Description: This 177-nucleotide RNA was probed chemically with DMS and 2A3. The reactions ran in a buffer of 150 mM KOAc, 10 mM MgCl2 and 150 mM bicine (pH 8.5), at 24 C. For DMS the reverse transcriptase was MarathonRT. Reactivities are given for positions 27 through 126.
RNA sequence: GGGAACGACUCGAGUAGAGUCGAAAAGUAAACAGGUUGAGUAGAGUGUGAGCCGCUGCGAUACCAGCUCGAUUACGAGCGCUUGGCAGCGCGUCGGAAGGACGGGUCCCUGAAUAUAAAAAAGUAAUCUUUUAGUCUUAUUCGUAAGACUAAAAGAAAAAGAAACAACAACAACAAC
Reactivity to DMS in 0.01 (KOAc 150mM, MgCl2 10mM, bicine 150mM(pH8.5), 24C), signal-to-noise 5, nucleotides 027 to 126: g020u010a050a100a110c080a040g010g000u000u000g000a100g020u000a060g010a090g010u010g010u010g010a120g020c060c020g020c020u000g000c020g000a070u010a040c070c030a150g020c000u000c000g010a260u010u010a100c080g000a040g010c020g020c140u000u000g010g010c060a040g010c010g010c060g000u000c030g010g010a060a070g010g010a080c040g000g000g010u010c020c010c010u000g000a040a090u010a090u030a010a040a060a080a050a120g000u020a060a110
Reactivity to 2A3 in 0.01 (KOAc 150mM, MgCl2 10mM, bicine 150mM(pH8.5), 24C), signal-to-noise 1, nucleotides 027 to 126: g050u110a040a000a120c070a050g000g050u070u100g080a040g040u120a040g020a030g040u100g000u020g040a010g090c040c010g000c030u000g000c040g050a040u060a060c000c020a020g000c020u000c010g110a140u120u260a140c050g000a030g000c040g000c070u040u060g090g050c010a000g000c040g000c030g060u030c020g010g080a120a020g040g020a020c010g060g000g000u020c000c020c010u000g020a040a010u160a050u120a060a090a010a020a090a000g080u050a080a140